[RMDB]
RNA sequence: GGGAACGACUCGAGUAGAGUCGAAAACGGGGGUACACGAGCGGCGAACGGGUGAGUAACACGUGAGUAAUCUGCCCUGCUCUCUGGGAUAACCGCUGGAAACGGUGGCUAAUACCGGAUAGGACGCGCGUGUUGUAAGCUUCGGCUUACAACACGCAAAAGAAACAACAACAACAAC
Reactivity to DMS in 0.01 (KOAc 150mM, MgCl2 10mM, bicine 150mM(pH8.5), 24C), signal-to-noise 1, nucleotides 027 to 126: c120g000g020g000g000g010u000a060c080a050c070g000a080g020c060g000g000c100g030a090a110c150g000g000g030u000g010a120g010u000a130a000c140a060c100g030u000g010a100g010u000a130a080u000c030u010g000c000c010c010u000g050c020u000c020u000c010u010g000g000g060a080u000a080a070c010c000g000c000u010g000g010a110a090a140c020g010g020u000g000g000c000u000a150a070u020a140c000c010g000g000a040u000a030g000g000a080c150g000c020
This 177-nucleotide RNA was probed chemically with DMS. The RNA was probed in 150 mM KOAc, 10 mM MgCl2 and 150 mM bicine (pH 8.5) at 24 C. The data come from the RNA Mapping Database (RMDB), library OK2TRN. Values cover nucleotides 27 to 126.